[RMDB]
RNA sequence: GGGAACGACUCGAGUAGAGUCGAAAACCGUAGGGACCCUUGUCAGAUUUGCGUGUGGCUUUGAUCAGGACUUCGAAAGAGGUCCUGGGAGCCACAUACAAAUCUUGGAUUUAGGGUCCCUAAACGGAAAAGAAAAUGCUAUUCGUAGCAUUUUCAAGUUAAUAUAUCGGUUCGCCGAUAUAUUAACAAAAGAAACAACAACAACAAC
Reactivity to DMS in 0.01 (KOAc 150mM, MgCl2 10mM, bicine 150mM(pH8.5), 24C), signal-to-noise 2, nucleotides 027 to 156: c000c000g030u000a040g030g020g020a030c010c000c010u000u000g000u010c040a050g010a010u000u000u020g020c000g080u000g020u000g020g010c010u000u000u020g020a170u010c000a020g010g020a020c000u020u000c000g030a160a180a280g010a040g030g000u000c010c000u000g010g000g000a040g020c000c000a020c010a000u020a000c010a010a010a000u010c020u000u020g040g010a050u010u000u000a030g020g000g050u000c000c000c000u000a010a030a040c030g010g020a150a070a110a180g000a010a000a010a020u000g000c000u000a070u010u010c300g020u000a000g000c000a010u000u000u000u000c010a050a170

Conditions: 150 mM KOAc, 10 mM MgCl2 and 150 mM bicine (pH 8.5), 24 C. Structure probing data (DMS) for a 207-nucleotide construct. The data come from the RNA Mapping Database (RMDB), library RNAMAK.